[RMDB]
RNA sequence: GGGAACGACUCGAGUAGAGUCGAAAAGCUUAAUGCCAACCUGUUAUCAUUUGUGACCUACAACAUUUGAUAACGGUCAUUUUAGUAGGAUAUACUCUACCAGAGCCCACUUGUAGAGCGAAUUUAAGGGCUUAGCUUAGUGUGUCUUGAUCAUCAGGAAGGAGAAGGAGUUCGCUCCUUCUCCUUCAAAAGAAACAACAACAACAAC
Reactivity to DMS in 0.01 (KOAc 150mM, MgCl2 10mM, bicine 150mM(pH8.5), 24C), signal-to-noise 2, nucleotides 027 to 156: g000c020u020u010a060a040u000g040c000c050a120a110c070c010u010g000u000u000a020u000c000a020u000u010u020g020u000g000a190c110c080u010a130c020a120a020c000a030u000u000u000g020a080u000a010a020c000g020g020u010c070a050u000u010u000u000a070g030u030a120g050g010a200u000a300u010a040c060u000c000u000a040c020c040a100g000a040g000c000c010c010a210c050u010u010g040u010a050g010a060g030c030g000a130a080u000u010u000a040a100g040g010g020c000u000u000a080g000c040u000u000a080g050u000g010u020g020u010c040u000u000g000a300u010c070a060u020c160a140g010
Conditions: 150 mM KOAc, 10 mM MgCl2 and 150 mM bicine (pH 8.5), 24 C. Chemical mapping of a 207-nucleotide RNA with DMS.